[RMDB]
RNA sequence: GGGAACGACUCGAGUAGAGUCGAAAAUUGCGGUUACUGAUUUGGCUUCUGUAUGAGGACGGGCUCUAAGUACAUGAAGUCAGUUUGGCUUCUACAUAUGUAGAUAUGUGCUUUUCACCAAAGAUCAUGAACAGUCAGCAUUCGUGCUGACUGUUCAAAAAGAAACAACAACAACAAC
Reactivity to DMS in 0.01 (KOAc 150mM, MgCl2 10mM, bicine 150mM(pH8.5), 24C), signal-to-noise 1, nucleotides 027 to 126: u000u000g020c060g000g040u020u010a150c020u000g010a050u000u040u000g020g010c000u000u000c000u000g010u000a010u010g000a300g000g000a040c060g010g000g010c250u000c010u000a030a300g000u000a000c010a000u010g030a010a020g000u000c040a010g030u000u000u000g010g020c130u000u010c020u020a000c020a100u000a030u020g000u010a060g000a000u020a070u010g010u000g000c080u000u000u000u000c150a100c060c030a110a090a140g000a060u010c120a170
Reactivity to 2A3 in 0.01 (KOAc 150mM, MgCl2 10mM, bicine 150mM(pH8.5), 24C), signal-to-noise 1, nucleotides 027 to 126: u070u030g010c010g080g000u110u150a090c010u000g060a060u080u120u020g020g010c010u010u000c000u030g000u010a020u010g020a040g080g000a030c160g030g250g000c020u000c030u080a010a000g000u000a000c010a060u230g010a010a010g000u030c010a000g020u000u020u100g040g030c040u030u050c060u050a040c010a070u240a070u280g060u040a030g010a080u120a020u130g120u060g000c020u120u040u100u020c170a170c030c060a000a020a040g120a020u230c020a070

Conditions: 150 mM KOAc, 10 mM MgCl2 and 150 mM bicine (pH 8.5), 24 C. Structure probing data (DMS and 2A3) for a 177-nucleotide construct. The 2A3 profile rests on 788 reads. For 2A3 the reverse transcriptase was SuperScript II with manganese. DMS adducts were read by reverse transcription with MarathonRT.